[RMDB]
RNA sequence: GGGAACGACUCGAGUAGAGUCGAAAAGAUAUGGAAUGAUCCACAUUUCGACGAUCUCGGAAACGAGGGAGAAGGGUGGAGUCAUUCCUAAGUCAAAGUGCUGAAAGCCUUCGGGCUUUCAGCACAAGUUAACGCGAUAGUUCGCUAUCGCGUUAACAAAAGAAACAACAACAACAAC
Reactivity to DMS in 0.01 (KOAc 150mM, MgCl2 10mM, bicine 150mM(pH8.5), 24C), signal-to-noise 2, nucleotides 027 to 126: g010a070u000a300u010g020g000a020a000u000g000a100u000c000c000a000c030a040u010u000u000c000g000a110c240g010a050u000c010u010c000g010g010a130a080a210c000g000a000g000g010g010a040g000a020a050g010g020g050u000g000g000a020g010u020c000a020u000u000c000c000u000a020a070g010u000c030a080a080a200g000u000g000c010u000g010a000a000a010g000c000c020u000u010c210g040g020g030c000u000u000u000c000a000g010c000a000c000a010a060
Reactivity to 2A3 in 0.01 (KOAc 150mM, MgCl2 10mM, bicine 150mM(pH8.5), 24C), signal-to-noise 1, nucleotides 027 to 126: g030a020u060a030u170g000g010a020a000u010g000a020u030c000c010a020c000a050u020u040u000c210g140a300c000g000a120u000c020u010c010g000g040a050a100a070c020g010a000g010g010g030a040g000a010a000g050g020g000u020g000g020a030g030u050c020a000u010u000c000c000u000a080a010g020u010c060a160a060a000g000u000g110c000u010g030a000a020a020g010c030c010u030u170c300g020g010g040c100u000u010u000c000a010g020c000a000c000a000a000

Source information
This 177-nucleotide RNA was probed chemically with DMS and 2A3. The RNA was probed in 150 mM KOAc, 10 mM MgCl2 and 150 mM bicine (pH 8.5) at 24 C. It was measured as part of the RMDB library TTRDEL. Reactivities are given for positions 27 through 126.